[RMDB]
RNA sequence: GGGAACGACUCGAGUAGAGUCGAAAAUAUAGAGCGGAUUUUCAUAACUGGUAGACGAAUCGCAUUAGGUUCUCAGGCAAAUGCGGCACCUAGGUCACAACUUAGCAAUCAUUGCAUGAACUUCCUCCGUCUAGGACAAAUUCGUUUGUCCUAGACGAAAAGAAACAACAACAACAAC
Reactivity to DMS in 0.01 (KOAc 150mM, MgCl2 10mM, bicine 150mM(pH8.5), 24C), signal-to-noise 4, nucleotides 027 to 126: u010a070u010a080g030a080g010c080g010g000a100u000u000u000u000c110a080u010a100a100c110u000g020g010u000a080g010a100c120g000a050a030u000c070g020c080a080u010u010a070g020g020u010u010c040u000c090a080g000g020c080a040a070a060u010g020c040g010g010c080a060c110c040u000a060g020g010u000c150a050c110a090a070c060u000u000a050g010c050a060a070u000c080a070u000u000g000c070a080u010g000a060a070c090u000u000c020c010u000c230
Reactivity to 2A3 in 0.01 (KOAc 150mM, MgCl2 10mM, bicine 150mM(pH8.5), 24C), signal-to-noise 2, nucleotides 027 to 126: u230a030u080a030g050a010g020c040g020g020a030u040u020u020u120c060a040u070a160a100c050u060g050g040u050a020g010a100c050g050a050a020u070c040g000c080a060u060u110a050g020g020u070u030c080u020c080a030g000g050c020a000a000a090u080g030c000g030g010c010a040c020c040u020a030g040g000u030c050a020c010a110a080c060u050u070a020g010c040a010a060u100c020a070u030u170g040c030a020u030g040a010a040c030u030u020c010c000u040c040